[RMDB]
RNA sequence: GGGAACGACUCGAGUAGAGUCGAAAAGAUAUGGAUGUACGCGAUAAGCUCGUGUCGGAAACGACAUAGAGCUUUUGACGCGUAAAUCCUAAGUCAGCGGCCCUUUGGGGUUCGCCCCAAAGGGCAACCACUAUUGUCUGUUCGCAGACAAUAGUGGAAAAGAAACAACAACAACAAC
Reactivity to DMS in 0.01 (KOAc 150mM, MgCl2 10mM, bicine 150mM(pH8.5), 24C), signal-to-noise 3, nucleotides 027 to 126: g000a010u000a090u020g010g000a010u000g000u000a000c010g020c000g000a100u010a030a020g010c010u000c010g010u000g010u000c000g010g000a030a020a060c010g010a010c000a000u000a050g020a020g010c000u000u000u010u010g010a290c010g020c000g010u000a010a020a000u000c000c000u010a010a120g000u000c010a140g010c190g010g000c000c000c010u010u010u000g010g010g000g010u000u000c230g000c030c000c020c000a000a020a010g000g010g000c030a000a000
Reactivity to 2A3 in 0.01 (KOAc 150mM, MgCl2 10mM, bicine 150mM(pH8.5), 24C), signal-to-noise 3, nucleotides 027 to 126: g010a010u030a010u070g000g000a010u000g010u070a000c000g020c000g050a150u060a300a030g000c000u000c010g000u010g010u020c000g000g000a010a010a010c010g010a000c000a010u040a100g030a000g000c020u020u010u020u030g000a000c000g010c000g000u000a030a010a000u010c000c000u000a030a000g020u010c040a010g130c180g270g020c010c020c060u000u000u010g050g000g050g000u080u070c250g120c010c000c000c010a000a010a000g010g000g000c000a000a010

An RNA of 177 nucleotides, treated with DMS and 2A3 and read out base by base.
DMS (dimethyl sulfate) methylates the pairing face of unpaired adenines and cytosines.
Source: RMDB library TTRDEL, as collected in RNAgym.
The reactions ran in a buffer of 150 mM KOAc, 10 mM MgCl2 and 150 mM bicine (pH 8.5), at 24 C.
Reactivities are given for positions 27 through 126.
For DMS the reverse transcriptase was MarathonRT.
The 2A3 profile rests on 7,835 reads.